[RMDB]
RNA sequence: GGGAACGACUCGAGUAGAGUCGAAAAAGAUCCACGCUACGGCGUGGAUCACACGUUCAUCCCCAUUGGGACGGAAGUAGGCAUAGUGCCGAAGGAACGCAUUAGUCAUGCGCUACGGCGCAUGACACACAUCAGAGUCACUUCGGUGACUCUGAAACUUUUCAAUGGUGUUCGCACCAUUGAAAAGAAAAGAAACAACAACAACAAC
Reactivity to 2A3 in 0.01 (KOAc 150mM, MgCl2 10mM, bicine 150mM(pH8.5), 24C), signal-to-noise 4, nucleotides 027 to 156: a010g010a000u000c000c000a010c000g010c020u030a050c280g150g000c000g000u000g030g000a000u000c000a000c000a000c000g020u010u020c020a020u040c030c000c000c040a160u160u300g000g000g000a000c020g020g020a050a010g020u040a010g000g010c040a080u170a210g120u150g200c010c010g000a000a010g020g010a020a030c020g010c050a070u050u140a030g000u000c000a000u010g000c000g000c000u020a050c280g080g000c010g000c000a000u000g000a000c000a000c010a020c000a090u020c000a000g000a000g010u000c000a010c010u070u170c260g100g000u000g000a000c000u010c000u000g000a000a000a000
Reactivity to DMS in 0.01 (KOAc 150mM, MgCl2 10mM, bicine 150mM(pH8.5), 24C), signal-to-noise 2, nucleotides 027 to 156: a110g030a010u000c010c000a000c000g060c000u010a120c230g100g010c020g080u000g020g020a040u010c010a010c030a010c070g000u000u000c000a250u000c010c000c000c130a240u000u000g010g000g020a040c000g010g000a080a080g040u000a180g030g000c020a210u000a120g060u000g030c000c020g000a140a130g020g000a050a050c080g110c040a100u010u020a070g000u000c030a030u010g010c010g010c030u000a040c280g090g020c030g000c020a000u000g020a000c000a030c050a050c110a110u000c000a000g000a040g000u000c000a020c010u000u000c300g000g000u000g000a010c000u000c000u000g000a020a020a050